[RMDB]
The data come from the RNA Mapping Database (RMDB), library TTRDEL.
This 177-nucleotide RNA was probed chemically with DMS and 2A3.
The DMS profile rests on 2,461 reads.
RNA sequence: GGGAACGACUCGAGUAGAGUCGAAAAGAUAUGGAACCUUGACGCUUUUGACGAGCCUCGGAAACGAGUGCUCGAUAAGCGUAAGGUUCCUAAGUCAUACCGCUAGUUCCUUCGGGAACUAGCGGAACGUAGGGAGCAAGUUCGCUUGCUCCCUACGAAAAGAAACAACAACAACAAC
Reactivity to DMS in 0.01 (KOAc 150mM, MgCl2 10mM, bicine 150mM(pH8.5), 24C), signal-to-noise 2, nucleotides 027 to 126: g000a020u000a300u000g000g000a010a010c000c000u000u000g020a020c000g000c000u000u010u010u000g000a210c060g010a000g000c010c000u000c010g020g000a070a080a140c010g000a020g010u010g020c000u000c000g010a040u010a020a030g010c000g020u000a010a010g000g000u000u000c000c000u010a010a060g000u000c000a170u000a120c010c010g000c000u010a020g020u000u000c000c000u000u020c230g030g000g000a000a010c000u000a000g000c000g000g000a010a000
Reactivity to 2A3 in 0.01 (KOAc 150mM, MgCl2 10mM, bicine 150mM(pH8.5), 24C), signal-to-noise 2, nucleotides 027 to 126: g020a010u040a040u110g000g000a000a010c010c010u000u030g180a040c020g030c010u090u140u240u240g180a080c000g010a000g000c000c000u020c020g020g030a050a020a000c010g000a000g060u180g030c000u000c000g000a000u000a020a010g010c000g000u000a000a010g000g000u000u020c000c000u000a000a000g010u000c000a040u110a200c000c010g000c000u010a000g020u000u010c000c000u030u080c270g080g010g010a000a000c010u000a000g010c000g010g000a000a010
2A3 adducts were read by reverse transcription with SuperScript II with manganese. For DMS the reverse transcriptase was MarathonRT. Conditions: 150 mM KOAc, 10 mM MgCl2 and 150 mM bicine (pH 8.5), 24 C.